[RMDB]
RNA sequence: GGGAACGACUCGAGUAGAGUCGAAAAGUGGGAGCAAGAGCCCGGAGAUGGAUUCUGAGACACGAAUCCAGGCCCUACGGGGCGCAGCAGGCGCGAAAACUCUACAAUGCAGGCAACUGCGAUAGGGGUCUAUUUAUUAUUUCGAUAAUAAAUAGACAAAAGAAACAACAACAACAAC
Reactivity to 2A3 in 0.01 (KOAc 150mM, MgCl2 10mM, bicine 150mM(pH8.5), 24C), signal-to-noise 7, nucleotides 027 to 126: g070u070g000g040g020a060g030c080a120a070g040a050g130c000c010c020g030g020a110g010a050u060g000g000a000u000u000c010u020g030a020g020a050c050a030c200g000a010a000u000c000c000a000g040g000c000c010c000u010a050c110g020g000g000g000c030g000c000a020g050c030a020g020g060c010g000c010g070a050a060a040a040c020u010c000u020a030c060a050a100u200g000c010a000g030g020c020a090a060c090u010g000c010g010a030u060a040g040g010g010
Reactivity to DMS in 0.01 (KOAc 150mM, MgCl2 10mM, bicine 150mM(pH8.5), 24C), signal-to-noise 6, nucleotides 027 to 126: g010u020g000g000g010a070g010c060a110a170g010a250g020c010c010c040g000g010a100g000a130u000g000g010a010u000u000c000u010g000a280g010a200c190a170c170g000a020a000u010c000c000a020g010g010c030c030c010u000a090c100g010g010g000g010c020g000c060a060g010c080a060g010g010c050g000c050g000a070a080a070a190c010u010c000u000a040c110a120a120u040g000c020a020g000g000c230a090a130c010u000g000c010g000a090u010a030g000g000g010